Conditions: 150 mM KOAc, 10 mM MgCl2 and 150 mM bicine (pH 8.5), 24 C. The record gives the reactivity of an RNA of 177 nucleotides to 2A3 and DMS.

[RMDB]
RNA sequence: GGGAACGACUCGAGUAGAGUCGAAAAGAUAUGGAGUGAACUACACUGUAAACUUCGCGAAGAACUUGUUUAGACUCGGAAACGAGUCUAAACAAGGGAGCGAAGGAAGAAGGUGCACUCCUAAGUCCAUUGAAAGGCAGUUCGCUGCCUUUCAAUGAAAAGAAACAACAACAACAAC
Reactivity to 2A3 in 0.01 (KOAc 150mM, MgCl2 10mM, bicine 150mM(pH8.5), 24C), signal-to-noise 1, nucleotides 027 to 126: g010a020u100a090u230g000g020a000g020u000g000a070a060c040u210a070c300a010c010u100g000u010a000a020a020c010u040u050c020g000c030g190a300a140g050a130a130c000u000u010g020u000u050u000a000g000a020c000u000c000g010g000a050a090a010c020g000a000g000u060c000u020a000a000a000c000a000a020g020g000g010a030g010c010g000a000a010g000g010a000a150g010a000a000g070g030u030g000c000a000c000u030c000c000u020a030a030g010u030c020
Reactivity to DMS in 0.01 (KOAc 150mM, MgCl2 10mM, bicine 150mM(pH8.5), 24C), signal-to-noise 2, nucleotides 027 to 126: g000a100u000a300u010g040g030a010g010u000g000a180a030c110u000a300c010a040c000u000g030u000a010a120a300c000u000u000c000g030c010g000a070a210g010a180a290c010u000u000g000u020u010u000a010g010a030c000u000c000g060g000a090a130a230c000g010a010g000u010c000u020a000a030a020c000a000a000g000g000g000a120g020c000g030a020a000g010g000a010a060g050a230a300g010g000u020g000c000a000c010u010c000c000u010a010a100g000u000c030
For 2A3 the reverse transcriptase was SuperScript II with manganese.